An RNA of 177 nucleotides, treated with DMS and 2A3 and read out base by base. Values cover nucleotides 27 to 126. For 2A3, 5,202 sequencing reads were counted. Conditions: 150 mM KOAc, 10 mM MgCl2 and 150 mM bicine (pH 8.5), 24 C. For 2A3 the reverse transcriptase was SuperScript II with manganese.
RNA sequence: GGGAACGACUCGAGUAGAGUCGAAAAAGGCUUUAUACAUAGUGCUGAGACUCUGGCCAGCUGAGGAUACUGGUCACUACUUAGCCACAGGAGAGGAAAAGGACCAGAUGUUCCUUAGACCUUGCUACGGAAAAUCAUUAUUCGUAAUGAUUUUCCGAAAAGAAACAACAACAACAAC
Reactivity to DMS in 0.01 (KOAc 150mM, MgCl2 10mM, bicine 150mM(pH8.5), 24C), signal-to-noise 4, nucleotides 027 to 126: a070g010g010c040u000u000u000a090u000a150c130a100u010a100g010u000g020c030u000g000a070g000a110c130u000c100u000g010g000c010c050a040g010c080u000g010a080g010g000a090u000a100c010u000g000g000u000c010a040c040u000a130c020u000u000a030g010c040c050a080c180a080g000g010a110g010a060g010g010a180a050a060a080g010g010a040c020c060a090g010a120u010g010u000u000c000c000u000u000a050g010a200c070c010u000u010g020c070u000a150
Reactivity to 2A3 in 0.01 (KOAc 150mM, MgCl2 10mM, bicine 150mM(pH8.5), 24C), signal-to-noise 5, nucleotides 027 to 126: a000g110g000c100u180u150u080a210u090a080c090a090u170a070g060u090g100c020u020g020a040g040a180c040u010c040u090g010g010c000c010a010g000c050u100g080a100g120g050a050u040a130c010u010g000g010u000c010a000c010u040a020c000u020u040a030g040c010c030a080c050a080g050g060a120g010a010g020g000a050a090a000a010g020g000a010c010c010a060g020a240u140g070u050u030c000c000u000u020a060g020a070c000c000u030u050g010c030u060a050